[RMDB]
This 177-nucleotide RNA was probed chemically with 2A3 and DMS. As a SHAPE reagent, 2A3 marks flexible, mostly unpaired nucleotides at the ribose 2'-OH. Values are in units of 0.01, from 0 to 300, in steps of 10.
RNA sequence: GGGAACGACUCGAGUAGAGUCGAAAAAUAGAUCACUCCAGGCAUCUUUCAUGACAACUGUGAUCCCUGUGGUGACAACAAUUGCACUCCUGUCUGAUGUUGCCCUGGCAGCUCGGAAUGAUUGGAAUAAUCGUAUUAGCUUCGGCUAAUACGAUUAAAAAGAAACAACAACAACAAC
Reactivity to 2A3 in 0.01 (KOAc 150mM, MgCl2 10mM, bicine 150mM(pH8.5), 24C), signal-to-noise 3, nucleotides 027 to 126: a000u070a020g100a100u040c010a010c010u000c040c020a010g000g030c020a010u000c040u100u260u210c050a090u180g170a120c070a130a060c180u060g020u070g090a020u040c020c030c000u040g000u040g050g000u010g020a020c020a000a050c030a060a190u110u170g080c060a010c080u040c000c010u050g020u000c030u040g050a060u200g000u010u020g000c020c050c070u070g120g000c010a020g000c010u020c000g000g070a040a070u120g100a140u120u100g080g040a080a100
Reactivity to DMS in 0.01 (KOAc 150mM, MgCl2 10mM, bicine 150mM(pH8.5), 24C), signal-to-noise 5, nucleotides 027 to 126: a080u010a100g000a200u000c020a010c010u010c120c010a040g020g000c270a030u000c030u000u010u000c080a050u020g010a100c210a070a070c210u000g010u000g000a040u000c260c030c000u010g010u000g000g010u010g010a030c040a120a090c120a040a050u010u010g010c160a060c110u000c030c020u000g030u000c010u010g000a040u000g010u000u000g010c010c040c150u010g010g000c060a020g010c000u010c050g000g010a050a050u000g000a110u000u010g000g010a130a120